[RMDB]
RNA sequence: GGGAACGACUCGAGUAGAGUCGAAAAGUGAUUUAUUGAAUAUUGUUACUGAAAGUGAGAAACAGCAUGGUUGCAUGAAAGGAGGCACAGUCGAGCCAGGCACAGCCUGGGCGCAGAGCGAGACUCAAGUUAUGAUAGACUUCGGUCUAUCAUAACUAAAAGAAACAACAACAACAAC
Reactivity to DMS in 0.01 (KOAc 150mM, MgCl2 10mM, bicine 150mM(pH8.5), 24C), signal-to-noise 8, nucleotides 027 to 126: g020u020g000a030u010u010u020a070u010u030g010a110a110u020a090u010u010g010u000u010a070c050u000g010a050a080a100g010u020g000a060g010a080a070a090c080a070g010c070a030u010g000g010u000u010g010c040a050u020g020a050a060a070g000g010a070g000g010c050a040c090a070g010u020c040g000a100g000c030c020a020g000g010c030a100c150a130g000c020c000u000g000g000g010c040g010c040a070g000a080g010c040g000a080g000a120c040u010c070a090
Reactivity to 2A3 in 0.01 (KOAc 150mM, MgCl2 10mM, bicine 150mM(pH8.5), 24C), signal-to-noise 7, nucleotides 027 to 126: g050u040g050a090u070u110u220a120u120u180g060a060a070u150a040u100u130g040u060u070a080c040u060g080a080a050a050g080u110g040a050g060a050a110a020c020a010g030c020a020u080g040g020u060u050g010c040a030u040g080a060a060a050g060g020a030g020g010c030a020c020a030g030u060c020g020a020g050c000c000a000g000g000c020a030c040a300g000c010c020u010g010g010g000c020g000c020a040g020a010g020c030g020a010g020a030c010u000c080a030
Chemical mapping of a 177-nucleotide RNA with DMS and 2A3.
For DMS the reverse transcriptase was MarathonRT.
For 2A3, 7,378 sequencing reads were counted.